The record gives the reactivity of an RNA of 177 nucleotides to DMS and 2A3. Source: RMDB library OK1LIB, as collected in RNAgym. For 2A3, 1,471 sequencing reads were counted. DMS adducts were read by reverse transcription with MarathonRT.
RNA sequence: GGGAACGACUCGAGUAGAGUCGAAAAUGGUUACUGAGAGGUUAGAAGUAUAUCUUCGCUUGCCAGAAAGAGAAUGCGCAUUCAUUUGAUCCUGAUCCUUGUGGAUCGAAAGGUAGACUAGACUGGAAGUAAGCAACGAUUUCGAUCGUUGCUUACUAAAAGAAACAACAACAACAAC
Reactivity to DMS in 0.01 (KOAc 150mM, MgCl2 10mM, bicine 150mM(pH8.5), 24C), signal-to-noise 2, nucleotides 027 to 126: u010g000g040u040u010a040c060u000g000a120g000a030g020g010u000u010a090g020a050a030g000u000a060u030a130u070c020u020u010c020g000c030u000u010g010c040c020a050g000a030a090a050g010a140g000a090a030u000g010c140g030c070a080u020u010c020a070u030u010u020g000a130u000c000c000u000g010a080u000c010c010u080u030g020u020g020g010a000u000c000g000a000a070a090g000g000u000a020g010a090c020u020a040g000a070c030u000g000g010a270
Reactivity to 2A3 in 0.01 (KOAc 150mM, MgCl2 10mM, bicine 150mM(pH8.5), 24C), signal-to-noise 3, nucleotides 027 to 126: u070g020g000u020u010a050c040u030g020a040g010a040g170g050u110u220a040g000a120a040g030u020a060u100a060u300c050u080u020c010g040c030u000u010g160c010c000a010g040a030a160a000g070a010g030a130a080u070g010c070g000c020a070u060u060c000a060u060u140u120g040a100u010c010c000u020g070a040u000c000c020u140u290g090u220g170g000a000u020c000g000a100a040a010g060g020u070a000g020a150c040u020a010g000a090c020u030g010g050a080